Structure probing data (2A3 and DMS) for a 177-nucleotide construct. Conditions: 150 mM KOAc, 10 mM MgCl2 and 150 mM bicine (pH 8.5), 24 C. The DMS profile rests on 2,515 reads. For 2A3, 2,338 sequencing reads were counted.
RNA sequence: GGGAACGACUCGAGUAGAGUCGAAAAGGUUCCAACCAACCAAUUAAGGUUGGUUAACCAAUUGGAACCAAGGAAUUAAGGAACCGGCCUUCCAACCAACCGGCCUUAAGGAACCUUGGUUAAGGCCCAUGGUUAAACUCUUCGGAGUUUAACCAUGAAAAGAAACAACAACAACAAC
Reactivity to 2A3 in 0.01 (KOAc 150mM, MgCl2 10mM, bicine 150mM(pH8.5), 24C), signal-to-noise 3, nucleotides 027 to 126: g060g010u040u060c060c010a000a000c000c000a000a000c010c010a080a110u300u220a300a100g000g000u000u000g000g010u000u010a000a000c010c010a040a140u140u140g080g040a010a010c010c000a000a000g020g000a050a070u080u090a060a000g020g040a190a300c010c020g020g010c010c020u170u070c050c040a160a170c030c030a010a010c000c020g040g000c010c010u020u010a020a010g100g040a050a060c000c010u010u020g010g010u030u000a020a030g050g010c040c030
Reactivity to DMS in 0.01 (KOAc 150mM, MgCl2 10mM, bicine 150mM(pH8.5), 24C), signal-to-noise 4, nucleotides 027 to 126: g000g010u000u000c230c180a020a020c020c000a010a020c010c020a140a160u000u010a180a100g000g010u010u000g000g010u010u000a020a040c020c030a090a230u010u000g010g000a060a020c000c000a010a000g010g020a110a140u010u000a000a020g000g000a130a110c020c000g010g000c110c080u000u010c130c090a080a110c140c170a110a150c010c020g000g010c000c000u000u000a000a030g000g020a130a090c000c010u010u000g000g000u000u000a040a070g000g010c030c020